[RMDB]
The record gives the reactivity of an RNA of 177 nucleotides to DMS and 2A3. Source: RMDB libraries RFM100 and RFMREP, as collected in RNAgym. Conditions: 150 mM KOAc, 10 mM MgCl2 and 150 mM bicine (pH 8.5), 24 C.
RNA sequence: GGGAACGACUCGAGUAGAGUCGAAAAACUAUGGAGAGUUUGAUCCUGGCUCAGAGUGAACGCUGGCGGCGUGCCUAAUACAUGCAAGUCGAACGAUGAAGCUUCUAGCUUGCUAGAAGUGAAUUAGAAUUGAAGAUCGGUUCGCCGAUCUUCAAUUAAAAGAAACAACAACAACAAC
Reactivity to DMS in 0.01 (KOAc 150mM, MgCl2 10mM, bicine 150mM(pH8.5), 24C), signal-to-noise 4, nucleotides 027 to 126: a040c030u010a100u060g010g010a120g010a030g010u000u000u000g000a090u000c020c020u000g000g020c060u010c050a090g010a110g000u020g010a120a070c120g000c030u010g020g000c050g000g020c040g020u000g000c000c060u020a060a100u030a100c130a110u010g010c050a080a060g020u000c050g010a110a140c120g010a060u020g000a300a240g000c000u000u000c000u000a000g010c020u030u000g010c000u000a000g000a010a000g010u010g000a050a090u010u020a120g000
Reactivity to 2A3 in 0.01 (KOAc 150mM, MgCl2 10mM, bicine 150mM(pH8.5), 24C), signal-to-noise 3, nucleotides 027 to 126: a000c030u040a070u150g060g020a080g010a020g050u070u010u250g060a070u050c000c000u010g080g000c000u010c030a080g050a010g100u080g040a070a020c040g030c050u070g060g000c000g000g000c010g010u030g010c000c010u090a130a120u120a090c070a070u080g060c040a040a000g090u080c040g050a060a010c050g040a050u090g040a060a010g000c000u010u010c000u000a000g010c000u030u080g020c000u000a030g000a000a000g000u050g010a000a000u090u050a050g090